[RMDB]
RNA sequence: GGGAACGACUCGAGUAGAGUCGAAAAGCGUAACGGCUGGGUGUGACCCAACUCUAGGUGUGCUGAUUAGCGGGCUUGACUCCGUAACAAAUAGGCACUGGUGGUAAAAAGCAUCCCACCUACUCACAAAGCUCCAAAUUCUUCGGAAUUUGGAGAAGGUGCUAGAUAACUUCGGUUAUCUAGCACCAAAAGAAACAACAACAACAAC
Reactivity to 2A3 in 0.01 (KOAc 150mM, MgCl2 10mM, bicine 150mM(pH8.5), 24C), signal-to-noise 1, nucleotides 027 to 156: g070c020g070u110a040a040c030g060g020c040u020g060g000g000u060g060u130g070a020c000c020c020a050a090c110u130c140u160a080g020g000u070g020u020g040c020u010g030a150u020u080a070g030c000g000g020g020c020u070u050g060a060c060u000c030c000g000u000a020a020c020a000a030a110u070a020g110g000c020a010c110u010g000g110u110g010g100u140a070a050a050a030a050g010c030a070u090c010c000c000a000c030c050u120a110c010u060c020a090c110a060a130a060g000c020u000c000c000a000a000a000u000u000c000u000u000c080g110g000a000a020u000u000u020g000g000a000g000a020a000
Conditions: 150 mM KOAc, 10 mM MgCl2 and 150 mM bicine (pH 8.5), 24 C.
Structure probing data (2A3) for a 207-nucleotide construct.
It was measured as part of the RMDB library M2RFPK.
Reactivities are given for positions 27 through 156.
The 2A3 profile rests on 466 reads.